[RMDB]
RNA sequence: GGGAACGACUCGAGUAGAGUCGAAAAAAGUUGCACCAGGUACGGAUACCUGACGUUGCCAAACAGGGUGACAUGAGGAUCACCCAUGUACUGUCCCUUGGCAGCCGUACCUGGUGCUGGUGAAAAACUGAAUUAGGAAAUUCGUUUCCUAAUUCAGAAAAGAAACAACAACAACAAC
Reactivity to 2A3 in 0.01 (KOAc 150mM, MgCl2 10mM, bicine 150mM(pH8.5), 24C), signal-to-noise 5, nucleotides 027 to 126: a000a000g220u100u030g010c000a000c000c000a000g000g000u000a000c000g010g030a080u100a210c020c050u050g050a040c080g110u130u050g020c000c000a030a040a030c020a020g010g000g010u020g010a020c030a080u210g140a150g130g050a090u050c030a120c020c010c000a020u020g010u010a060c070u090g040u070c010c000c000u000u020g010g000c010a010g050c000c000g000u000a000c010c000u000g000g000u000g000c000u000g000g020u120g050a130a070a010a000a000
Reactivity to DMS in 0.01 (KOAc 150mM, MgCl2 10mM, bicine 150mM(pH8.5), 24C), signal-to-noise 8, nucleotides 027 to 126: a070a060g010u010u000g010c010a020c000c000a000g000g010u000a010c010g010g000a140u010a100c130c070u010g010a050c170g010u010u000g000c020c010a010a030a030c050a040g000g000g020u000g010a010c020a150u010g010a150g020g010a220u000c030a020c000c000c000a030u000g020u000a040c170u010g000u000c010c060c010u000u000g000g000c010a170g010c000c000g000u000a000c000c000u000g000g020u000g000c000u000g010g010u010g000a080a060a050a080a120
Structure probing data (2A3 and DMS) for a 177-nucleotide construct.
The reactions ran in a buffer of 150 mM KOAc, 10 mM MgCl2 and 150 mM bicine (pH 8.5), at 24 C.
The DMS profile rests on 16,134 reads.